[RMDB]
RNA sequence: GGGAACGACUCGAGUAGAGUCGAAAAACGCUGGACUACGGUCCAGCGAUGUGCCGCACUGACCGCUCGUCAGCUCGUCGCGGAUGCUUUACCAUGGUGACUUCGCGCCGGAUCAGCUCCGGCGUAAGGAAUAUUAGCCUUUCGAGGCUAAUAUUCCAAAAGAAACAACAACAACAAC
Reactivity to DMS in 0.01 (KOAc 150mM, MgCl2 10mM, bicine 150mM(pH8.5), 24C), signal-to-noise 4, nucleotides 027 to 126: a100c030g020c020u000g000g000a020c000u010a100c210g030g030u010c010c000a020g010c000g000a000u000g010u020g030c040c010g000c040a220c080u030g000a040c040c140g020c080u010c120g000u010c030a040g000c090u030c100g000u000c060g010c040g000g000a040u020g010c040u020u010u000a170c050c030a090u010g000g010u010g000a080c060u000u020c070g000c020g000c000c000g000g000a030u020c290a140g040c300u010c010c000g010g000c010g050u000a000a030
Reactivity to 2A3 in 0.01 (KOAc 150mM, MgCl2 10mM, bicine 150mM(pH8.5), 24C), signal-to-noise 6, nucleotides 027 to 126: a000c010g020c000u010g010g000a010c000u030a050c270g130g000u000c000c000a000g000c010g000a000u000g010u070g030c000c030g020c000a050c050u090g050a050c000c060g070c090u080c050g060u050c020a040g010c030u060c060g110u040c060g020c030g040g000a070u080g020c020u090u090u100a140c010c030a070u120g070g030u070g070a110c030u080u030c140g000c010g000c010c000g000g020a060u100c060a070g080c070u000c000c000g000g000c000g000u010a000a000
This 177-nucleotide RNA was probed chemically with DMS and 2A3.
The RNA was probed in 150 mM KOAc, 10 mM MgCl2 and 150 mM bicine (pH 8.5) at 24 C.
High DMS reactivity at an A or C suggests that its Watson-Crick edge is free.
The data come from the RNA Mapping Database (RMDB), libraries RFM100 and RFMREP.
The 2A3 profile rests on 4,981 reads.
Values cover nucleotides 27 to 126.